Description
Structure probing data (2A3) for a 207-nucleotide construct. Source: RMDB library M2RFPK, as collected in RNAgym. Conditions: 150 mM KOAc, 10 mM MgCl2 and 150 mM bicine (pH 8.5), 24 C. For 2A3, 1,032 sequencing reads were counted.

[RMDB]
RNA sequence: GGGAACGACUCGAGUAGAGUCGAAAAUCAUCAAGAAGUAGGCUUAGGCCAAUUGCUUGGUGGUGAAAGUAUAGGGAAGGUAGCACUUCGACGCCUCUAAGUACGCUGUGGGAGUAGUGCUUAAAUCAAAAGCACAGCGACUUCGGUCGCUGUGCAACUCUUUCCAUGCCUUCGGGCAUGGAAAGAGAAAAGAAACAACAACAACAAC
Reactivity to 2A3 in 0.01 (KOAc 150mM, MgCl2 10mM, bicine 150mM(pH8.5), 24C), signal-to-noise 2, nucleotides 027 to 156: u030c000a000u010c010a010a000g050a080a020g040u090a060g020g010c030u130u120a100g160g000c010c040a030a050u090u060g000c010u020u010g000g000u000g020g000u010g020a110a050a000g030u120a030u090a090g080g030g030a090a000g060g010u070a040g020c010a040c070u030u040c060g110a120c040g070c040c010u030c030u050a080a030g030u050a060c040g020c090u050g000u070g090g060g000a070g020u120a040g010u020g050c010u020u040a050a080a020u090c070a060a060a030a010g000c010a000c000a000g010c000g010a000c000u020u040c200g080g000u010c000g000c000u000g000u020g000c000a000a000